[RMDB]
The record gives the reactivity of an RNA of 207 nucleotides to DMS and 2A3. It was measured as part of the RMDB library M2RFPK. The RNA was probed in 150 mM KOAc, 10 mM MgCl2 and 150 mM bicine (pH 8.5) at 24 C. For 2A3 the reverse transcriptase was SuperScript II with manganese. Values cover nucleotides 27 to 156.
RNA sequence: GGGAACGACUCGAGUAGAGUCGAAAAUACCGUCUUCUCCCCGACGGUUUCAAUCCAUAGCUUCACGUUGUGUAGCGUAGGUGGAAGGUAUCGUGUGGUGUAUAAACACCACAUAGUCUCUUAGAGGUCAAGCUGAUAAACUUCGGUUUAUCAGCAAUAUUGGAUGCACUUUCGAGUGCAUCCAAUAAAAAGAAACAACAACAACAAC
Reactivity to DMS in 0.01 (KOAc 150mM, MgCl2 10mM, bicine 150mM(pH8.5), 24C), signal-to-noise 1, nucleotides 027 to 156: u010a030c000c000g010u000c000u000u000c060u000c040c020c040c160g000a040c000g000g020u010u000u000c060a110a130u000c040c020a140u010a120g010c040u000u010c010a060c040g020u000u010g030u000g040u000a030g040c120g040u020a050g050g050u000g010g000a050a050g000g040u000a060u010c060g040u010g010u010g000g020u030g000u000a120u010a100a100a150c000a010c000c000a000c010a010u000a010g020u010c030u000c020u020u010a130g010a080g010g010u000c100a080a280g000c000u000g030a030u000a000a010a000c000u010u010c300g030g060u000u000u000a000u000c000a020g020c000a010a030
Reactivity to 2A3 in 0.01 (KOAc 150mM, MgCl2 10mM, bicine 150mM(pH8.5), 24C), signal-to-noise 1, nucleotides 027 to 156: u120a010c000c010g030u000c000u140u020c020u050c000c010c000c040g000a020c010g000g050u000u000u120c040a000a080u010c030c020a050u020a040g010c000u040u020c050a030c070g290u160u160g030u030g040u040a020g000c000g090u070a100g050g030u060g010g070a030a050g060g010u070a010u150c050g000u000g000u000g060g030u000g040u000a120u120a300a200a000c000a020c000c000a000c000a000u000a000g020u000c000u020c000u090u050a050g010a030g050g000u130c100a040a010g040c000u000g020a000u000a000a000a000c000u000u080c210g030g040u010u000u000a000u000c030a040g000c000a000a000